[RMDB]
RNA sequence: GGGAACGACUCGAGUAGAGUCGAAAAUGCACGCUUGGCACGAGCAAAAAUGAACAUAGAUAGAUCACCUGAAAGUAAAGACAUAACAUUCUUCAGGAGUUUAGUGAAAGCAGUAUUUUCCAAGCGCACAAGCAUUUAAUUUCGAUUAAAUGCUUGUAAAAGAAACAACAACAACAAC
Reactivity to DMS in 0.01 (KOAc 150mM, MgCl2 10mM, bicine 150mM(pH8.5), 24C), signal-to-noise 8, nucleotides 027 to 126: u010g010c090a140c070g020c020u000u000g010g020c300a040c050g010a100g010c040a020a040a080a090a110u000g010a060a070c060a110u010a090g020a160u010a060g000a080u010c070a110c000c010u000g000a030a020a060g020u010a040a060a110g020a120c250a070u010a080a130c120a080u000u010c070u000u010c020a010g000g010a230g010u000u000u000a030g000u000g000a090a140a070g010c020a060g040u010a080u000u000u000u000c000c010a040a060g000c070g010c170
Reactivity to 2A3 in 0.01 (KOAc 150mM, MgCl2 10mM, bicine 150mM(pH8.5), 24C), signal-to-noise 6, nucleotides 027 to 126: u090g010c030a020c100g010c010u030u010g060g000c040a010c070g040a050g010c050a010a060a070a040a070u100g010a070a000c050a080u120a060g100a060u080a040g130a060u130c030a050c130c010u010g020a070a040a020g050u130a040a100a020g110a040c040a050u140a090a020c020a080u090u030c010u020u010c010a000g010g040a040g030u050u050u030a070g000u050g050a070a050a000g000c010a010g020u070a090u040u090u000u000c000c000a010a010g030c030g020c020
An RNA of 177 nucleotides, treated with DMS and 2A3 and read out base by base. High DMS reactivity at an A or C suggests that its Watson-Crick edge is free. For DMS the reverse transcriptase was MarathonRT.